[RMDB]
Description:
The record gives the reactivity of an RNA of 207 nucleotides to 2A3 and DMS. For 2A3 the reverse transcriptase was SuperScript II with manganese. It was measured as part of the RMDB library OK3TST. The reactions ran in a buffer of 150 mM KOAc, 10 mM MgCl2 and 150 mM bicine (pH 8.5), at 24 C.
RNA sequence: GGGAACGACUCGAGUAGAGUCGAAAACUGCUUCUCUGAAUACUCUAAGGGAGGCAGAUCUAGGCCAGGUGACCAGGGUUUACAAGUCCCAGGACAGCAGGUUGGGCUUGGUGCACGGAAGAACUGAUGAGCAGCUUCACUCAUGCAGCAGGACAGACUAUCAGCAUAGUUUCGACUAUGCUGAUAGAAAAGAAACAACAACAACAAC
Reactivity to 2A3 in 0.01 (KOAc 150mM, MgCl2 10mM, bicine 150mM(pH8.5), 24C), signal-to-noise 4, nucleotides 027 to 156: c000u000g000c000u000u020c000u000c000u010g120a170a120u140a200c050u040c060u130a070a030g010g000g000a010g000g000c000a000g000a010u020c060u080a070g040g040c010c010a050g000g030u040g060a030c020c030a030g050g020g010u030u180u100a050c030a090a010g060u050c030c010c010a010g000g050a040c020a030g050c030a000g010g060u070u090g070g010g000c000u010u030g020g010u020g030c040a030c090g010g030a080a030g010a100a080c030u050g020a050u020g010a110g060c030a020g010c050u070u080c040a040c030u060c010a020u120g000c010a020g030c010a020g030g050a020c060a030g090a030
Reactivity to DMS in 0.01 (KOAc 150mM, MgCl2 10mM, bicine 150mM(pH8.5), 24C), signal-to-noise 3, nucleotides 027 to 156: c010u000g000c010u000u000c000u000c000u010g000a150a130u000a080c110u000c060u020a300a070g030g010g010a030g010g020c000a020g000a030u010c040u020a120g030g000c030c020a110g020g010u000g000a060c010c040a180g010g010g030u000u000u000a100c070a090a120g030u020c020c010c010a160g000g000a120c050a100g010c040a050g050g020u000u000g000g010g010c080u010u000g010g050u000g030c060a090c070g000g010a080a100g020a070a070c050u010g010a110u000g000a080g010c010a080g010c060u000u000c080a110c040u010c050a060u010g010c050a050g020c040a060g000g010a140c050a110g010a160